[RMDB]
RNA sequence: GGGAACGACUCGAGUAGAGUCGAAAAGAGCGAUUAGACAAAGGGGUAGAGCUUCAUAUUAGAUAGCUGUAUAAUCGUUCAAGUUACAUCAAAACAUCUUCAAUAUUUAUUACUUACUUUCCUUUCUGCCAGAGUACGGUAUUCGUACCGUACUCAAGUCUUUUCAACGUUUCGACGUUGAAAAGACAAAAGAAACAACAACAACAAC
Reactivity to 2A3 in 0.01 (KOAc 150mM, MgCl2 10mM, bicine 150mM(pH8.5), 24C), signal-to-noise 4, nucleotides 027 to 156: g010a000g000c010g010a010u010u010a000g030a050c090a040a060a020g090g030g010g020u050a010g020a010g020c000u000u010c040a090u110a230u300u100a090g050a100u180a020g010c000u010g000u040a040u020a030a010u000c010g000u010u000c000a010a020g020u050u100a080c050a080u100c060a040a080a050a080c020a050u080c090u280u100c050a090a080u080a170u160u200u080a150u140u100a090c030u060u040a020c010u020u070u120c000c000u010u070u080c020u030g030c020c070a030g000a000g000u000a000c000g000g000u010a010u000u060c090g010u010a000c010c000g000u000a010c000u000c000a000a000